[RMDB]
RNA sequence: GGGAACGACUCGAGUAGAGUCGAAAAGAUAAUGUCUUCGGACAUUAUCCACGCCUAAAGGCUUUAAUUAAUUAGCUAAGGCUGCUAAUUAAAAUGGCAUUAACAACUGUCCAUUCGUGGACAGUAACUGUAAGUUAAGGUUCGCCUUAACUUACAGAAAAGAAACAACAACAACAAC
Reactivity to DMS in 0.01 (KOAc 150mM, MgCl2 10mM, bicine 150mM(pH8.5), 24C), signal-to-noise 7, nucleotides 027 to 126: g000a010u000a000a000u010g010u000c000u000u010c220g030g000a010c000a000u000u000a000u000c010c040a100c270g000c000c000u000a070a090a120g020g010c000u010u000u010a080a120u000u000a000a010u000u000a010g010c010u000a090a150g020g020c260u000g000c000u000a000a010u000u010a000a010a070a130u000g000g010c000a120u010u000a070a120c210a090a050c000u000g010u000c000c000a040u000u010c170g010u000g000g000a010c010a000g000u000a020a080
Reactivity to 2A3 in 0.01 (KOAc 150mM, MgCl2 10mM, bicine 150mM(pH8.5), 24C), signal-to-noise 8, nucleotides 027 to 126: g000a000u010a010a000u010g000u000c010u040u070c230g060g000a000c000a000u000u000a000u000c000c000a040c050g030c000c000u100a160a110a030g140g000c000u110u060u040a050a040u020u020a000a010u010u010a040g010c010u040a150a090g300g020c170u050g000c000u020a010a030u030u000a010a030a030a070u110g010g000c030a050u090u140a100a040c060a030a020c010u000g000u000c000c000a020u040u070c210g110u030g000g000a000c000a000g000u000a010a040